[RMDB]
RNA sequence: GGGAACGACUCGAGUAGAGUCGAAAAGCUUGCGUAACCAUUCAUGUGUUCAUGGACAUUUUGGUGGUUUCCGGUUUUGGGCUGUUACUAUUAAAGGAUCUAUGAAUGUUUGUGUAAUGAACAUUCAUAUGUUCAUUAUGUUCAAGUCUUUGCGUGGGUUACUCGGUAUGUUCGCAUACCGAGUAACAAAAGAAACAACAACAACAAC
Reactivity to DMS in 0.01 (KOAc 150mM, MgCl2 10mM, bicine 150mM(pH8.5), 24C), signal-to-noise 2, nucleotides 027 to 156: g020c040u000u000g040c080g040u000a080a060c010c010a080u000u010c020a040u000g050u000g040u000u000c080a150u010g030g000a030c030a060u000u000u000u020g030g010u010g000g000u000u000u000c040c030g010g020u000u010u000u020g000g020g020c030u000g030u000u000a080c050u000a100u010u000a070a080a110g010g010a040u000c130u000a030u000g010a100a030u000g010u000u010u000g040u000g010u010a090a060u000g010a020a010c000a050u000u000c080a100u000a000u000g010u000u000c020a080u010u000a030u000g000u020u040c050a040a100g000u000c040u000u000u020g000c050g000u000g010g010
Reactivity to 2A3 in 0.01 (KOAc 150mM, MgCl2 10mM, bicine 150mM(pH8.5), 24C), signal-to-noise 5, nucleotides 027 to 156: g060c060u130u170g040c040g050u030a020a000c010c000a020u080u110c050a050u190g010u020g040u070u080c080a150u180g110g020a020c050a040u270u270u050u100g040g000u000g000g000u010u020u030c040c000g030g000u040u040u060u120g040g010g000c010u010g010u100u060a020c050u030a030u190u130a090a080a050g050g010a010u000c020u040a010u050g030a020a020u040g050u030u050u010g170u050g050u160a110a160u270g010a010a000c000a000u000u030c010a010u060a010u100g010u000u000c020a010u060u080a060u090g030u000u060c030a040a030g030u000c010u030u120u150g070c090g080u130g030g110